[RMDB]
RNA sequence: GGGAACGACUCGAGUAGAGUCGAAAAGAUUCGCCGUCGGCAUUUCCCCAGCAGCCAUGACCUACCAGGCUGCGGUGCGGCUCGCCGCACAGGUCAUCCCUUAUCGGGCGCGUCCUGCGUCCUUCCAAAAACUGACUAACCUUCGGGUUAGUCAGAAUCUAUUACUAGGGUUCGCCCUAGUAAUAGAAAAAGAAACAACAACAACAAC
Reactivity to 2A3 in 0.01 (KOAc 150mM, MgCl2 10mM, bicine 150mM(pH8.5), 24C), signal-to-noise 2, nucleotides 027 to 156: g010a050u070u060c040g000c040c040g090u090c080g000g030c080a090u020u060u100c010c000c000c000a040g010c000a000g000c000c020a210u190g000a020c000c010u150a300c110c080a000g000g000c010u000g000c000g020g000u000g000c030g000g000c060u070c170g160c020c010g050c000a010c010a000g010g030u010c010a080u080c060c010c020u140u080a120u300c060g000g010g000c020g000c010g060u260c050c120u140g000c000g060u000c020c010u000u060c010c010a050a090a090a120a120c010u000g000a000c000u000a000a000c010c010u040u060c170g100g000g000u000u000a000g010u020c000a020g000a000a000